[RMDB]
RNA sequence: GGGAACGACUCGAGUAGAGUCGAAAAAGCAACGAGUGUGUGUGGGACGAUUUAUCCCAAGCUCUGAGUAGAGCACGCGCUCACACACACCGCGAGCGAGCAUCAGCAGAGCGCAAACGCUGGUAAACCAGUAUCUAACAUUCGUGUUAGAUACUGGAAAAGAAACAACAACAACAAC
Reactivity to 2A3 in 0.01 (KOAc 150mM, MgCl2 10mM, bicine 150mM(pH8.5), 24C), signal-to-noise 8, nucleotides 027 to 126: a000g090c070a060a040c020g020a110g060u010g000u000g000u000g000u010g000g000g030a040c010g020a030u080u130u200a150u130c010c030c020a010a010g000c010u000c000u070g300a230g180u300a020g160a000g010c010a010c060g060c010g000c010u010c000a000c000a000c000a000c000a000c000c010g040c020g010a010g010c020g020a020g010c010a030u060c010a010g020c010a030g040a050g130c080g000c110a110a060a020c060g000c020u010g000g060u110a080a050a040
Reactivity to DMS in 0.01 (KOAc 150mM, MgCl2 10mM, bicine 150mM(pH8.5), 24C), signal-to-noise 9, nucleotides 027 to 126: a100g010c050a180a050c020g000a290g020u000g010u000g020u000g010u000g000g000g000a070c020g010a170u000u010u010a130u010c020c030c030a080a090g010c010u000c000u000g000a180g020u020a040g010a010g010c010a240c100g010c070g000c000u000c000a010c000a000c000a010c000a010c010c010g000c030g000a210g000c010g010a090g000c090a040u000c020a030g010c030a090g000a110g010c080g000c120a060a090a100c120g010c010u000g010g010u000a050a090a190